[RMDB]
RNA sequence: GGGAACGACUCGAGUAGAGUCGAAAAGUAUUGUUACACUCCAUUUUGUCAGCUAUUAGGUAAGCAAAAGUUGGAACAAACGUGUAAAUUUUAGCUGAGUAGAAGUCCUUCUCCAUAUCACCCAUCACUAUCUAUCACGAUUCGUCGUGAUAGAUAGAAAAGAAACAACAACAACAAC
Reactivity to DMS in 0.01 (KOAc 150mM, MgCl2 10mM, bicine 150mM(pH8.5), 24C), signal-to-noise 6, nucleotides 027 to 126: g010u000a080u000u020g010u010u000a060c050a070c060u000c010c020a120u000u010u000u010g010u000c040a180g030c010u010a080u010u010a090g020g020u000a070a220g000c030a020a020a050a110g010u000u000g010g020a110a090c140a060a070a050c170g000u000g000u010a040a060a130u000u000u000u000a060g010c010u000g010a050g010u010a070g000a090a050g000u010c030c020u000u000c040u000c010c010a030u000a020u000c020a170c010c000c010a100u020c150a150
Reactivity to 2A3 in 0.01 (KOAc 150mM, MgCl2 10mM, bicine 150mM(pH8.5), 24C), signal-to-noise 7, nucleotides 027 to 126: g020u030a070u170u280g070u080u040a020c020a010c020u000c020c020a040u020u060u040u130g120u050c030a020g000c030u030a090u170u180a150g030g050u080a080a030g030c020a030a030a030a090g100u080u090g060g030a080a050c050a110a120a020c130g030u010g010u060a070a120a170u050u080u040u080a020g000c010u010g000a000g050u070a040g020a090a010g040u030c000c000u030u030c010u000c010c010a010u010a010u030c020a030c020c000c000a040u090c020a030